Annotation
The record gives the reactivity of an RNA of 207 nucleotides to DMS and 2A3. The reactions ran in a buffer of 150 mM KOAc, 10 mM MgCl2 and 150 mM bicine (pH 8.5), at 24 C. High 2A3 reactivity points to a flexible backbone, as in loops and unpaired stretches. For 2A3 the reverse transcriptase was SuperScript II with manganese.

RNA sequence: GGGAACGACUCGAGUAGAGUCGAAAAAUGAUUUGCAUUGGAUUUUAGGCAAGAAGAGUGGAAACUAGAAAUCGGAAUCCAAGAGUCAAAAGUAACAAACAGCAAGUGGUUGUAGAUGGUUCCGUUUACGAGUGUCAGCAGGGAAACUAGGGAGUGACAUUUUAGCCUACUUCGGUAGGCUAAAAUGAAAAGAAACAACAACAACAAC
Reactivity to DMS in 0.01 (KOAc 150mM, MgCl2 10mM, bicine 150mM(pH8.5), 24C), signal-to-noise 1, nucleotides 027 to 156: a080u010g010a050u000u000u010g050c010a150u010u000g010g010a150u000u000u000u000a110g000g010c070a080a170g010a090a190g010a080g040u000g000g010a050a020a070c020u010a110g050a030a070a090u010c050g030g000a050a100u010c030c060a050a100g010a160g050u010c100a020a060a070a100g010u000a080a080c050a070a030a040c050a030g000c030a050a100g020u000g010g020u010u000g070u000a050g010a070u010g000g020u010u000c020c010g020u000u000u000a110c070g010a100g030u000g010u000c070a040g000c070a060g000g000g000a040a030a080c110u010a040g000g020g010a100g060u000g020a130
Reactivity to 2A3 in 0.01 (KOAc 150mM, MgCl2 10mM, bicine 150mM(pH8.5), 24C), signal-to-noise 2, nucleotides 027 to 156: a000u070g040a020u050u060u100g000c040a030u040u080g010g010a060u030u070u070u120a080g060g000c020a030a040g060a110a000g010a040g080u050g020g040a040a040a020c060u040a070g080a060a070a030u070c050g010g040a030a000u040c050c010a030a020g030a000g120u050c040a030a010a160a020g040u080a030a100c070a080a090a020c000a020g020c020a060a090g060u060g090g010u030u010g010u050a050g000a080u040g000g040u050u030c010c010g010u040u040u040a080c090g010a010g030u040g020u040c010a010g030c010a020g000g030g000a050a040a000c050u060a020g000g000g010a070g020u030g000a010